This 207-nucleotide RNA was probed chemically with 2A3. For 2A3 the reverse transcriptase was SuperScript II with manganese. The RNA was probed in 150 mM KOAc, 10 mM MgCl2 and 150 mM bicine (pH 8.5) at 24 C.
[RMDB]
RNA sequence: GGGAACGACUCGAGUAGAGUCGAAAAGUCAUGCCUUCGGGCAUGACAGGUACCGAGAGGUACCAAAUAGCGUACAGCAGACUCCGACUGUACGCUAAGUAAGUGUGUGUUCAAUCGGGUCCAAUUGAACACACACUCCGUUGGACCACGAGUGUGACCCAGUAUAUGCGUUCGCGCAUAUACUGGGAAAAGAAACAACAACAACAAC
Reactivity to 2A3 in 0.01 (KOAc 150mM, MgCl2 10mM, bicine 150mM(pH8.5), 24C), signal-to-noise 1, nucleotides 027 to 156: g000u000c010a000u000g010c000c010u070u060c210g020g000g000c000a000u010g000a010c000a010g020g000u010a010c000c000g020a040g000a010g090g000u000a040c000c000a000a050a020u020a010g000c000g000u030a000c000a010g040c020a020g100a170c060u050c060c120g060a080c000u010g010u000a000c000g000c010u010a090a030g080u060a060a040g000u010g000u000g000u000g000u040u000c000a000a000u020c070g100g040g000u040c010c010a020a050u010u000g000a000a000c000a000c000a000c000a000c020u030c020c010g100u090u100g000g030a070c070c020a040c130g120a140g080u120g010u050g050a050